[RMDB]
RNA sequence: GGGAACGACUCGAGUAGAGUCGAAAAGAUAUACCUAUUAAGAUUUGGGCAGCAUUUCUGUUAGAGUUAGAUUUUGAAACGAAACACCAAAGUUUGGGAGUAAAGGUUAUGUCAUCUUUCAUCAAACUAAAGCGAUAUAUUUCGAUAUAUCGCUUUAAAAAGAAACAACAACAACAAC
Reactivity to DMS in 0.01 (KOAc 150mM, MgCl2 10mM, bicine 150mM(pH8.5), 24C), signal-to-noise 9, nucleotides 027 to 126: g000a100u020a050u020a040c020c010u010a090u020u010a080a060g000a060u000u010u000g010g010g010c070a070g020c040a020u000u000u000c010u010g010u000u010a040g000a180g000u010u010a070g000a080u010u010u010u010g010a070a090a090c120g010a080a050a050c080a090c070c070a050a070a060g000u010u000u000g000g000g000a140g020u030a030a030a030g000g010u000u020a080u030g010u030c120a030u010c030u000u000u000c070a080u020c080a050a040a060c090
Reactivity to 2A3 in 0.01 (KOAc 150mM, MgCl2 10mM, bicine 150mM(pH8.5), 24C), signal-to-noise 4, nucleotides 027 to 126: g020a000u150a000u030a130c000c010u040a060u110u120a070a060g120a250u080u090u070g040g050g070c050a060g030c040a090u000u070u060c010u060g060u070u060a030g010a010g110u060u100a040g010a180u040u040u070u150g100a060a030a010c040g040a050a060a000c070a040c040c070a070a030a040g030u020u030u050g070g030g020a080g020u100a000a040a110g030g010u070u050a050u140g080u060c010a050u000c040u010u020u000c010a100u030c030a040a020a080c070

Conditions: 150 mM KOAc, 10 mM MgCl2 and 150 mM bicine (pH 8.5), 24 C.
This 177-nucleotide RNA was probed chemically with DMS and 2A3.
For 2A3 the reverse transcriptase was SuperScript II with manganese.
For 2A3, 2,736 sequencing reads were counted.
It was measured as part of the RMDB library OK1LIB.